[RMDB]
RNA sequence: GGGAACGACUCGAGUAGAGUCGAAAACUGGCUCGACAACCUCGACAAGAUUGGAGAGGGCAACUGGGUCAAGGGCCUGCGGGACCUCGACGAAUCGCAGUUGCAGGCUGCCCUCAGCGCUGCCGUCUGUUUACUACUCUUUCGAGAGUAGUAAACAAAAAGAAACAACAACAACAAC
Reactivity to DMS in 0.01 (KOAc 150mM, MgCl2 10mM, bicine 150mM(pH8.5), 24C), signal-to-noise 9, nucleotides 027 to 126: c070u000g010g010c030u000c030g020a130c090a080a150c040c010u000c040g020a200c100a100a150g000a110u000u000g010g010a270g000a030g010g010g000c040a040a030c040u000g010g000g000u000c020a040a030g000g000g000c010c000u010g020c120g050g010g010a050c020c010u000c040g010a050c030g010a080a110u010c190g010c040a060g010u000u000g000c060a120g000g010c040u000g010c030c010c040u000c060a060g010c100g010c040u000g010c020c030g010u010c090
Reactivity to 2A3 in 0.01 (KOAc 150mM, MgCl2 10mM, bicine 150mM(pH8.5), 24C), signal-to-noise 1, nucleotides 027 to 126: c020u010g050g010c020u020c030g040a040c040a080a060c010c010u010c010g020a030c040a120a090g090a300u200u220g030g010a040g000a020g010g020g010c020a030a040c010u050g100g000g000u010c020a030a040g020g010g010c000c000u020g010c120g020g030g010a040c000c010u030c040g040a040c000g070a100a100u180c080g000c120a010g000u040u060g010c020a020g030g000c050u060g040c000c000c000u040c020a040g020c060g000c060u030g020c010c010g060u040c040